[RMDB]
RNA sequence: GGGAACGACUCGAGUAGAGUCGAAAAUUACUCUUGUUAGGUGAAAGUUGCUGGUCGCCGAGCCAGUCCGUACAUCCAAAAAGGACUCUAUGUAGUAGGAAGUCGAGAGCCUAUGAGAGUUAGAGUCAUGCCUAUUUUGUGUUCGCACAAAAUAGAAUCUAAAGCAUGAGUUCGCUCAUGCUUUAGAAAAAGAAACAACAACAACAAC
Reactivity to DMS in 0.01 (KOAc 150mM, MgCl2 10mM, bicine 150mM(pH8.5), 24C), signal-to-noise 2, nucleotides 027 to 156: u010u010a100c050u000c000u010u000g010u000u000a060g040g010u000g000a090a140a150g000u010u000g030c000u000g030g030u000c050g040c150c110g000a210g010c050c030a110g000u010c040c060g000u010a130c060a070u010c060c060a030a080a130a140a100g020g000a000c000u000c030u000a050u020g030u000a230g000u000a080g000g010a050a090g010u000c130g010a220g010a230g030c000c010u000a040u000g000a140g020a150g030u020u010a030g020a070g000u000c030a110u000g020c110c010u000a000u010u010u000u020g020u000g000u000u000c300g040c030a000c000a010a000a030a000u000a010g000a070a080
Reactivity to 2A3 in 0.01 (KOAc 150mM, MgCl2 10mM, bicine 150mM(pH8.5), 24C), signal-to-noise 3, nucleotides 027 to 156: u110u050a030c000u020c010u040u040g080u090u140a040g000g010u030g070a230a110a060g110u140u090g060c010u000g010g010u030c080g100c300c080g020a030g000c010c000a000g000u020c000c020g030u030a040c010a050u030c050c030a000a030a000a010a030g070g000a000c000u000c010u030a050u180g030u010a040g040u000a000g020g020a120a010g010u040c040g040a020g000a020g300c010c000u000a020u020g050a010g000a000g020u000u020a020g000a010g010u010c040a040u080g090c000c000u000a000u000u000u000u000g020u000g010u030u060c210g030c100a000c000a000a000a000a000u000a000g020a010a050

Conditions: 150 mM KOAc, 10 mM MgCl2 and 150 mM bicine (pH 8.5), 24 C. An RNA of 207 nucleotides, treated with DMS and 2A3 and read out base by base. The DMS profile rests on 3,453 reads. For 2A3, 1,565 sequencing reads were counted. Source: RMDB library M2RFPK, as collected in RNAgym. For DMS the reverse transcriptase was MarathonRT.